[RMDB]
RNA sequence: GGGAACGACUCGAGUAGAGUCGAAAAAAUGCCGCCUCAGUUCCAAGCUCUUUCGUGGCACUGUAAACAGUCCUAUUGAGUUAGGGGCAGUCAACCACGUUGCGAAGCUAAAUUAUUUGGUCGAGAGUUACGAUUCCCUACUUCGGUAGGGAAUCAAGUUCUGUCGAUGAUUCGUCAUCGACAGAACAAAAGAAACAACAACAACAAC
Reactivity to 2A3 in 0.01 (KOAc 150mM, MgCl2 10mM, bicine 150mM(pH8.5), 24C), signal-to-noise 2, nucleotides 027 to 156: a000a000u100g020c020c040g040c030c000u030c020a050g000u120u030c030c020a040a020g000c000u000c010u050u040u070c030g030u060g020g020c060a000c010u000g060u120a120a210a090c040a110g090u050c000c000u020a030u050u110g160a160g160u050u060a040g000g000g050g030c000a000g000u010c010a060a010c000c010a010c020g000u020u080g040c060g080a070a000g000c000u090a080a110a130u240u180a130u130u200u060g050g000u010c040g010a020g020a040g200u090u120a080c120g000a000u000u030c000c000c010u000a000c000u030u090c180g040g000u000a000g000g000g000a000a000u000c000a000a000